[RMDB]
RNA sequence: GGGAACGACUCGAGUAGAGUCGAAAAGCAAUAACUUCGGUUAUUGCAAAAAGAUAUGGAUGAGUCCAGAUGGGAGCGUUAAGCGGUCGGAAACGACCGUACGCGACGAUCAUCUGGAGCUCAUCCUAAGUCAAAAAACCGAUCUUCGGAUCGGUAACUGUCAUACGCAGUUCGCUGCGUAUGACAGAAAAGAAACAACAACAACAAC
Reactivity to 2A3 in 0.01 (KOAc 150mM, MgCl2 10mM, bicine 150mM(pH8.5), 24C), signal-to-noise 2, nucleotides 027 to 156: g000c000a000a000u000a000a000c020u110u150c300g040g000u010u020a020u000u010g000c030a020a000a000a020a030g050a030u090a010u120g010g000a000u000g000a000g000u000c020c000a000g000a000u000g000g000g000a090g030c010g000u060u080a300a060g000c020g020g030u020c000g010g020a080a090a050c010g010a000c010c000g000u000a000c030g010c000g080a160c030g000a000u040c000a000u010c010u000g000g000a000g010c010u000c000a000u000c000c000u010a000a000g010u010c030a110a110a000a000a000a040c040c000g010a020u030c000u010u090c300g150g000a000u000c000g030g030u030a010a030
Chemical mapping of a 207-nucleotide RNA with 2A3. Reactivities are rounded to 0.1 and cut off at 0 and 3. 2A3 adducts were read by reverse transcription with SuperScript II with manganese.